[RMDB]
RNA sequence: GGGAACGACUCGAGUAGAGUCGAAAAAAUUGACCUACUUCAACAGAUAAUGUUUUACCUGCCCAUUCUGUUGAAAACACUUGUUUUUCAGACAUAUUUUAAUCUCCUUUGAUUAGGAAACACGAACGAAUAUGCGAUGAUUCGUCAUCGCAUAUUCAAAAGAAACAACAACAACAAC
Reactivity to 2A3 in 0.01 (KOAc 150mM, MgCl2 10mM, bicine 150mM(pH8.5), 24C), signal-to-noise 4, nucleotides 027 to 126: a000a010u130u170g090a070c010c040u040a040c010u020u010c010a000a000c010a010g010a170u080a130a050u130g080u010u090u070u100a080c030c020u070g030c070c000c000a040u030u000c010u010g000u010u020g000a010a000a000a000c100a010c050u110u090g060u060u090u000u090u130c020a050g090a130c040a090u120a170u080u130u030u060a090a090u040c050u070c030c000u090u070u060g150a120u160u200a040g020g080a030a020a020c080a010c070g070a140a000c060
Reactivity to DMS in 0.01 (KOAc 150mM, MgCl2 10mM, bicine 150mM(pH8.5), 24C), signal-to-noise 3, nucleotides 027 to 126: a050a030u000u000g000a180c040c030u000a150c200u030u000c010a020a020c000a040g000a070u020a090a050u010g010u000u000u010u030a140c060c050u000g000c050c020c010a050u010u000c050u000g000u000u000g010a010a010a060a070c160a060c180u010u010g010u000u000u020u000u000c090a070g000a080c080a060u010a040u010u000u030u020a040a170u000c160u000c140c030u010u050u010g010a140u010u000a000g010g000a060a070a060c110a050c200g020a050a100c230